[RMDB]
RNA sequence: GGGAACGACUCGAGUAGAGUCGAAAAGACUUAGAUCAAUCACAUGAUGCCUCACGGAAUCCAUUAUUUGAUGUCAUGUUAGUACUACAAAACAAUGAAACGAAUCAUGCUCAUUUUGGGCAUAGUAACAUGUUAGUACCUUCGGGUACUAACAUGUAAAAGAAACAACAACAACAAC
Reactivity to 2A3 in 0.01 (KOAc 150mM, MgCl2 10mM, bicine 150mM(pH8.5), 24C), signal-to-noise 7, nucleotides 027 to 126: g040a030c090u160u130a060g040a080u090c070a110a040u090c030a070c010a100u110g030a020u060g040c000c010u060c030a070c020g040g020a030a040u080c050c020a040u110u130a110u140u120u080g070a060u070g070u050c020a030u050g020u070u050a040g050u050a060c040u070a050c170a040a130a100a010c050a090a110u230g070a140a090a050c070g040a030a020u080c030a020u030g000c010u000c010a120u090u130u170u220g000g000g020c000a010u050a050g020u020a010
Reactivity to DMS in 0.01 (KOAc 150mM, MgCl2 10mM, bicine 150mM(pH8.5), 24C), signal-to-noise 4, nucleotides 027 to 126: g000a080c080u010u010a020g020a030u010c040a020a100u030c120a040c160a030u030g000a030u000g000c010c040u020c080a060c140g010g010a100a030u030c090c020a040u020u020a030u020u000u030g010a060u010g000u020c060a080u010g000u030u000a080g010u030a050c120u000a130c170a100a030a060a040c190a050a030u050g030a060a020a040c080g000a140a040u050c110a000u010g000c020u000c000a100u010u010u020u010g010g000g000c000a000u000a050g010u030a060